[RMDB]
RNA sequence: GGGAACGACUCGAGUAGAGUCGAAAAAGGCGAUAAAGAAAUGGAAGAGCAUAAGGAGUGUCGCACACCGGUGAUGCGGCGCGUUUCCGGUGCGUCGACGACGUGGUGCGAUAGCGGCGUAGAGCCGAUUAGCGUAUCCAUUCGUGGAUACGCUAAUAAAAGAAACAACAACAACAAC
Reactivity to DMS in 0.01 (KOAc 150mM, MgCl2 10mM, bicine 150mM(pH8.5), 24C), signal-to-noise 3, nucleotides 027 to 126: a060g010g010c040g000a050u020a040a070a050g010a040a070a050u010g000g000a060a040g010a080g020c030a060u020a090a070g010g010a100g010u020g000u000c010g000c020a030c010a040c030c000g000g000u010g000a100u020g000c000g010g000c080g010c010g020u000u010u010c070c060g000g000u010g010c000g010u000c010g010a060c030g000a040c050g020u000g010g020u000g010c020g000a040u010a060g000c010g010g000c010g000u030a110g000a230g000c000c010g010
Reactivity to 2A3 in 0.01 (KOAc 150mM, MgCl2 10mM, bicine 150mM(pH8.5), 24C), signal-to-noise 9, nucleotides 027 to 126: a000g080g000c060g010a050u120a100a130a030g130a040a070a030u160g040g030a040a020g020a030g020c030a040u060a130a050g090g010a070g060u070g000u020c010g000c000a010c010a030c000c000g020g040u160g030a080u150g040c030g080g010c050g010c000g030u020u070u000c030c030g020g010u040g010c010g020u090c010g010a030c010g010a010c010g040u090g010g010u010g010c010g020a010u020a040g050c010g020g000c010g030u090a040g010a010g180c000c000g000

Notes
This 177-nucleotide RNA was probed chemically with DMS and 2A3. For DMS, 40,679 sequencing reads were counted. For DMS the reverse transcriptase was MarathonRT. Reactivities are given for positions 27 through 126. The 2A3 profile rests on 16,201 reads.